[RMDB]
RNA sequence: GGGAACGACUCGAGUAGAGUCGAAAAAGAGGCACGUGUGUGUGUUUGUGUGUGUGUGUAUAUGCUUGUCAGUGCAUGCACGUGUAUGUCUGGGAGUACAAAUGGGUGCGACUGGUUGUAGGGAACUUAGGACGAUAGUGUUCGCACUAUCGUCCUAAAAAGAAACAACAACAACAAC
Reactivity to DMS in 0.01 (KOAc 150mM, MgCl2 10mM, bicine 150mM(pH8.5), 24C), signal-to-noise 1, nucleotides 027 to 126: a070g020a140g040g020c000a010c040g070u000g020u010g070u000g040u030g040u010u020u000g070u000g030u010g040u000g000u020g060u000g010u040a150u030a060u000g000c090u000u050g000u000c080a100g000u020g040c000a020u000g000c060a010c070g000u010g030u000a030u000g000u000c000u010g000g000g070a100g000u010a020c090a030a090a090u000g010g050g030u000g020c040g000a120c040u010g000g030u000u000g030u000a000g010g000g000a050a060c190u000
Reactivity to 2A3 in 0.01 (KOAc 150mM, MgCl2 10mM, bicine 150mM(pH8.5), 24C), signal-to-noise 2, nucleotides 027 to 126: a000g050a010g000g000c000a000c000g030u050g000u030g000u040g000u000g060u060u110u030g010u090g000u000g000u000g000u030g010u010g000u120a080u070a030u260g010c090u060u250g160u140c040a000g060u020g070c000a000u010g020c010a000c070g000u000g000u040a070u060g170u030c060u010g000g020g000a160g020u080a030c030a080a300a110u110g000g050g040u060g010c050g040a050c010u030g000g020u090u100g000u060a080g050g010g010a000a030c010u000